[RMDB]
RNA sequence: GGGAACGACUCGAGUAGAGUCGAAAAUUUGAAGUUACUGAAGGCGCUGCUGGUAGCAAAGCUGCAGCAACUAAAUGGGAGCUUUUGGUGGCUGUGGGAAACGUCAGUAACGAUGAGAGCAGCGGUACAUGCUGCGAGGCUUCGGCCUCGCAGCAUGAAAAGAAACAACAACAACAAC
Reactivity to 2A3 in 0.01 (KOAc 150mM, MgCl2 10mM, bicine 150mM(pH8.5), 24C), signal-to-noise 1, nucleotides 027 to 126: u150u040u120g050a070a000g000u000u000a000c000u000g070a010a000g140g070c000g000c060u190g030c000u000g260g030u230a000g050c090a000a000a090g020c000u060g000c060a000g000c000a190a100c000u020a000a000a000u130g080g110g000a110g150c090u000u060u000u150g010g000u030g000g000c000u000g000u000g060g060g000a190a290a110c100g020u000c000a000g000u120a070a030c080g000a020u170g100a120g010a000g000c000a000g000c000g000g030u000a000
Chemical mapping of a 177-nucleotide RNA with 2A3. The reactions ran in a buffer of 150 mM KOAc, 10 mM MgCl2 and 150 mM bicine (pH 8.5), at 24 C.